[RMDB]
Chemical mapping of a 177-nucleotide RNA with DMS and 2A3. For 2A3 the reverse transcriptase was SuperScript II with manganese. As a SHAPE reagent, 2A3 marks flexible, mostly unpaired nucleotides at the ribose 2'-OH. It was measured as part of the RMDB library OK1LIB. The reactions ran in a buffer of 150 mM KOAc, 10 mM MgCl2 and 150 mM bicine (pH 8.5), at 24 C. Reactivities are given for positions 27 through 126. For DMS, 3,761 sequencing reads were counted.

RNA sequence: GGGAACGACUCGAGUAGAGUCGAAAAAAUAGGACUAGGUUGUAGUGACAAUUUAAUCACUUCAGCCAGAGCAUGAUGCUUGCGAGUUUGAUGAAGCCCAGAAAGUUGACAGCAAGUUUGUCAUAACUCCUGUCCCAAUUUUCGAAUUGGGACAGGAAAAAGAAACAACAACAACAAC
Reactivity to DMS in 0.01 (KOAc 150mM, MgCl2 10mM, bicine 150mM(pH8.5), 24C), signal-to-noise 3, nucleotides 027 to 126: a020a010u000a100g010g000a060c000u000a080g030g010u010u010g010u000a020g020u030g020a010c170a080a190u080u050u100a120a170u000c000a000c000u000u000c000a010g030c000c000a100g000a050g020c010a040u020g000a070u010g000c010u000u000g000c150g010a040g000u010u010u010g060a050u010g000a090a150g000c000c000c040a150g000a050a050a100g020u000u000g020a060c000a130g000c120a070a090g000u070u010u000g040u000c010a050u010a070a140c120
Reactivity to 2A3 in 0.01 (KOAc 150mM, MgCl2 10mM, bicine 150mM(pH8.5), 24C), signal-to-noise 1, nucleotides 027 to 126: a000a020u300a090g000g150a030c180u080a110g000g000u070u000g000u000a000g000u000g000a000c050a010a010u050u300u300a050a090u070c000a020c000u110u000c000a000g060c000c000a000g020a000g000c030a020u080g000a000u030g020c020u230u140g000c030g030a070g120u080u000u140g010a060u120g000a020a020g010c000c000c000a030g140a080a000a000g170u200u110g060a070c000a000g010c000a120a230g000u000u000u120g080u000c060a060u000a020a080c060